[RMDB]
RNA sequence: GGGAACGACUCGAGUAGAGUCGAAAAGAUAUGGAUCCCGAAAUGGCAUCGAUCUAUCAUCUCGGAAACGAGAUAUAGGGAGCCAUAGGGAUCCUAAGUCAAACCGUCACCCUUCGGGGUGACGGAACUGCUACGCUAAGUUCGCUUAGCGUAGCAGAAAAGAAACAACAACAACAAC
Reactivity to 2A3 in 0.01 (KOAc 150mM, MgCl2 10mM, bicine 150mM(pH8.5), 24C), signal-to-noise 1, nucleotides 027 to 126: g000a010u020a000u040g000g000a000u040c000c030c000g010a240a300a020u010g000g000c000a050u300c300g040a020u060c020u030a000u040c070a010u000c040u000c000g010g010a000a010a030c000g000a000g020a000u010a000u000a030g000g000g010a020g000c020c030a000u040a060g010g000g010a000u000c000c000u000a010a000g010u000c030a010a050a150c010c010g000u020c010a020c020c000c000u060u230c300g070g000g030g010u020g020a010c010g000g000a000a010
Reactivity to DMS in 0.01 (KOAc 150mM, MgCl2 10mM, bicine 150mM(pH8.5), 24C), signal-to-noise 1, nucleotides 027 to 126: g020a030u030a030u030g000g000a000u000c000c010c000g010a040a200a080u000g030g020c010a300u010c220g000a010u010c000u030a000u000c200a010u010c000u000c000g070g020a000a040a030c000g020a010g020a000u000a000u000a000g000g040g010a020g020c000c000a040u000a270g040g030g000a010u000c000c000u000a000a110g000u000c070a060a180a130c000c010g000u040c000a000c000c000c000u000u000c250g030g000g040g020u000g000a000c000g000g010a010a040